Background:
The record gives the reactivity of an RNA of 207 nucleotides to 2A3. Conditions: 150 mM KOAc, 10 mM MgCl2 and 150 mM bicine (pH 8.5), 24 C. The data come from the RNA Mapping Database (RMDB), library OK3TST.
[RMDB]
RNA sequence: GGGAACGACUCGAGUAGAGUCGAAAAGCGGCGGACGGGUGGGCACGAGUGCUGCUGCUGGGUGGUCGGCCGCUCGGCGAACGGAUCGUCAUGUGGUGGAACUUCGUCGGACGCGACCACGAGGAGAUCGCGGCCUACCGCGAGCGGUGGCAGCACGCUUUACAACAAGUUUCGACUUGUUGUAAAGAAAAGAAACAACAACAACAAC
Reactivity to 2A3 in 0.01 (KOAc 150mM, MgCl2 10mM, bicine 150mM(pH8.5), 24C), signal-to-noise 1, nucleotides 027 to 156: g050c020g170g020c120g000g010a180c050g000g010g040u220g050g040g020c100a090c170g150a020g030u000g000c000u000g010c000u010g000c000u020g060g100g000u010g010g000u000c000g040g070c070c030g010c010u040c000g020g000c000g000a010a030c040g000g050a080u130c000g100u010c060a120u300g170u240g050g090u040g030g070a020a040c040u040u000c030g010u010c000g000g000a000c010g000c010g030a000c020c000a010c000g000a070g000g100a110g020a050u040c020g000c000g020g020c040c050u070a290c020c010g000c000g000a000g020c010g000g000u000g000g000c000a000g000c010a000c000g020